[RMDB]
An RNA of 177 nucleotides, treated with DMS and 2A3 and read out base by base.
Conditions: 150 mM KOAc, 10 mM MgCl2 and 150 mM bicine (pH 8.5), 24 C.
2A3 adducts were read by reverse transcription with SuperScript II with manganese.
Values are in units of 0.01, from 0 to 300, in steps of 10.

RNA sequence: GGGAACGACUCGAGUAGAGUCGAAAAACACGCCAUCCACGUACGCGUGGAUGGCGUGACCGCCCAAGCCUCUGACGCAAGCUCAAAUCGGGCGGUACACGGCAUAGGAUACGUCCUAUGCCGUGAAACAAAGAAAGACAUUCGUGUCUUUCUUUGUAAAAGAAACAACAACAACAAC
Reactivity to DMS in 0.01 (KOAc 150mM, MgCl2 10mM, bicine 150mM(pH8.5), 24C), signal-to-noise 3, nucleotides 027 to 126: a230c010a010c010g010c010c000a000u000c020c000a050c020g040u000a080c240g030c030g120u020g010g010a010u000g000g000c000g010u000g010a010c000c000g020c000c000c000a100a010g000c000c010u000c000u000g000a170c080g000c020a010a010g000c000u000c190a000a010a040u010c150g020g000g020c000g010g010u000a020c010a010c000g000g000c000a010u000a010g010g000a020u000a080c220g020u000c000c000u000a000u000g000c000c000g000u010g000a060a110
Reactivity to 2A3 in 0.01 (KOAc 150mM, MgCl2 10mM, bicine 150mM(pH8.5), 24C), signal-to-noise 4, nucleotides 027 to 126: a000c010a000c000g010c000c000a000u000c010c020a000c000g100u110a030c290g020c010g080u000g020g000a000u000g000g000c000g010u000g000a000c000c000g010c000c000c000a000a000g000c040c100u040c000u030g020a050c080g010c300a020a030g000c010u080c090a020a040a080u200c170g000g000g000c010g000g000u020a020c000a000c000g010g000c000a000u000a000g000g010a020u020a050c210g110u050c010c000u000a000u000g000c000c000g010u000g000a000a000